[RMDB]
RNA sequence: GGGAACGACUCGAGUAGAGUCGAAAAACUAUUUGUUCUAUAGCAAAUAAACCCGAAACACAGGAUAUAUUUGUUAUAUAUGCUUUGUGGGACACAGCUGUUAGGACGUGAGCCAUCAGGGUCCAAAGGCUAUAAUCCCUUUCGAGGGAUUAUAGCCAAAAGAAACAACAACAACAAC
Reactivity to 2A3 in 0.01 (KOAc 150mM, MgCl2 10mM, bicine 150mM(pH8.5), 24C), signal-to-noise 2, nucleotides 027 to 126: a000c020u030a050u050u030u030g010u080u000c130u120a090u270a040g030c000a000a000a000u040a050a080a060c000c000c020g030a090a080a000c040a010c010a020g030g020a000u030a000u000a000u030u090u100g130u190u030a020u000a000u040a000u080g150c020u150u100u090g030u070g010g000g000a000c060a000c000a110g050c000u030g040u100u150a120g010g030a070c040g160u090g020a050g030c000c020a040u040c030a000g040g010g030u000c000c040a030a080a000
Reactivity to DMS in 0.01 (KOAc 150mM, MgCl2 10mM, bicine 150mM(pH8.5), 24C), signal-to-noise 1, nucleotides 027 to 126: a030c160u010a020u010u000u000g000u010u000c150u030a080u040a010g000c000a040a000a000u010a000a150a130c000c000c000g030a090a130a080c030a160c030a050g000g010a000u000a000u000a000u010u040u000g010u000u000a120u020a000u000a020u000g010c000u000u010u000g000u000g000g050g070a030c120a100c300a130g000c080u000g000u020u020a080g010g030a010c020g070u040g020a150g000c030c060a150u000c040a060g020g010g010u000c000c070a070a020a110